[RMDB]
RNA sequence: GGGAACGACUCGAGUAGAGUCGAAAAUUUAAGAGCGUAGAUGUCUCUGUCACCAUACGAGUAAGUGACUCUCGUGUACUACUGACGAAUGAGACAGAGACAUUUAUGCUCAGUGUCAGUCAAGGAACAGUUUCGUAUAGUUCGCUAUACGAAACUGAAAAGAAACAACAACAACAAC
Reactivity to 2A3 in 0.01 (KOAc 150mM, MgCl2 10mM, bicine 150mM(pH8.5), 24C), signal-to-noise 4, nucleotides 027 to 126: u070u120u080a200a040g010a000g000c000g000u000a000g000a020u000g010u000c000u010c000u000g000u010c010a100c190c000a020u020a030c010g020a000g030u050a250a060g010u060g120a050c000u030c020u060c180g150u140g030u120a010c010u000a000c010u030g160a080c010g030a030a010u040g010a020g010a050c000a000g000a000g000a000c000a000u000u000u000a000u000g010c000u000c000a000g000u010g020u030c050a030g030u040c050a060a060g080g020a080a110
Reactivity to DMS in 0.01 (KOAc 150mM, MgCl2 10mM, bicine 150mM(pH8.5), 24C), signal-to-noise 5, nucleotides 027 to 126: u000u010u010a110a130g010a020g020c000g030u000a030g010a000u000g010u000c000u000c000u010g000u000c010a130c120c020a030u000a020c020g010a110g010u000a020a060g000u000g000a050c020u000c190u010c220g010u010g020u000a020c010u000a030c020u010g000a160c030g010a180a020u000g010a150g010a000c000a000g000a020g000a020c010a000u000u000u000a010u000g020c010u000c000a030g010u000g000u000c080a050g000u000c080a060a070g010g000a080a180
This 177-nucleotide RNA was probed chemically with 2A3 and DMS. The RNA was probed in 150 mM KOAc, 10 mM MgCl2 and 150 mM bicine (pH 8.5) at 24 C. For DMS, 6,254 sequencing reads were counted.